Chemical mapping of a 177-nucleotide RNA with 2A3 and DMS.
The RNA was probed in 150 mM KOAc, 10 mM MgCl2 and 150 mM bicine (pH 8.5) at 24 C.
2A3 adducts were read by reverse transcription with SuperScript II with manganese.
It was measured as part of the RMDB library OK2TST.
For DMS the reverse transcriptase was MarathonRT.
RNA sequence: GGGAACGACUCGAGUAGAGUCGAAAAUAUAUGUUCGCUUAUUACGUCAUCACGCACGUGCUUUUCCCUCAGCGGGUUGAGGUUCAUUCGCAGGAACUCAGAGGACGUGGUGCGAGACAUGGCGACGAACUCCUAAGGGAUUCGUCCCUUAGGAGUUAAAAGAAACAACAACAACAAC
Reactivity to 2A3 in 0.01 (KOAc 150mM, MgCl2 10mM, bicine 150mM(pH8.5), 24C), signal-to-noise 6, nucleotides 027 to 126: u130a000u040a040u110g070u100u050c020g000c040u150u110a070u130u160a190c100g000u000c030a190u030c000a030c040g150c020a010c030g060u060g110c030u090u070u080u090c000c030c000u050c070a070g030c130g050g030g030u030u060g030a020g020g070u020u010c020a050u100u090c100g040c130a030g040g060a010a000c000u000c040a020g010a020g070g020a010c010g010u010g020g060u040g010c030g010a060g000a020c030a040u050g010g000c010g000a020c010g010
Reactivity to DMS in 0.01 (KOAc 150mM, MgCl2 10mM, bicine 150mM(pH8.5), 24C), signal-to-noise 8, nucleotides 027 to 126: u010a100u010a080u010g010u010u000c010g010c010u000u010a140u010u010a110c150g000u000c000a100u000c020a030c030g010c030a040c030g020u000g010c010u000u000u010u010c020c000c010u000c250a120g020c180g000g010g010u010u000g010a050g010g010u000u000c030a090u000u010c260g010c200a180g000g010a010a030c040u000c060a090g000a050g000g000a030c020g020u000g010g020u000g040c040g000a080g000a030c040a100u000g000g000c020g010a030c040g010